[RMDB]
This 177-nucleotide RNA was probed chemically with 2A3 and DMS. For DMS, 3,434 sequencing reads were counted. 2A3 adducts were read by reverse transcription with SuperScript II with manganese.

RNA sequence: GGGAACGACUCGAGUAGAGUCGAAAAGAUCAACAGCGCGCAUCGGUUGAGCGACUUUUCUAGUUGAUCGGUGCGCAGCUUCGACACUUGCUCGGCAAGGAAACGCUUGGCCCGGUCGACUAGUAGACACCAUUUAGCUGUUCGCAGCUAAAUGGUGAAAAGAAACAACAACAACAAC
Reactivity to 2A3 in 0.01 (KOAc 150mM, MgCl2 10mM, bicine 150mM(pH8.5), 24C), signal-to-noise 3, nucleotides 027 to 126: g030a090u080c030a020a090c030a040g050c010g000c010g000c070a100u110c100g140g000u100u090g050a020g070c060g030a100c030u120u110u050u020c020u010a020g000u000u000g010a020u000c010g000g000u040g000c260g080c000a000g020c010u070u070c030g090a060c020a030c140u020u010g000c060u110c240g130g020c010a020a010g040g060a120a110a000c060g020c040u080u200g060g040c010c000c000g000g020u000c000g010a010c000u000a010g010u010a000g010a030
Reactivity to DMS in 0.01 (KOAc 150mM, MgCl2 10mM, bicine 150mM(pH8.5), 24C), signal-to-noise 3, nucleotides 027 to 126: g000a100u010c030a080a090c090a040g040c030g050c090g000c080a060u010c060g020g010u010u000g000a060g000c060g010a100c110u000u000u000u000c030u000a030g010u000u000g000a020u000c000g000g020u010g010c000g030c070a020g000c020u010u000c170g010a240c180a190c020u000u000g020c010u000c170g010g000c020a010a020g000g010a040a120a080c190g000c020u010u000g010g000c020c010c000g010g000u000c010g000a010c020u000a030g010u010a080g010a250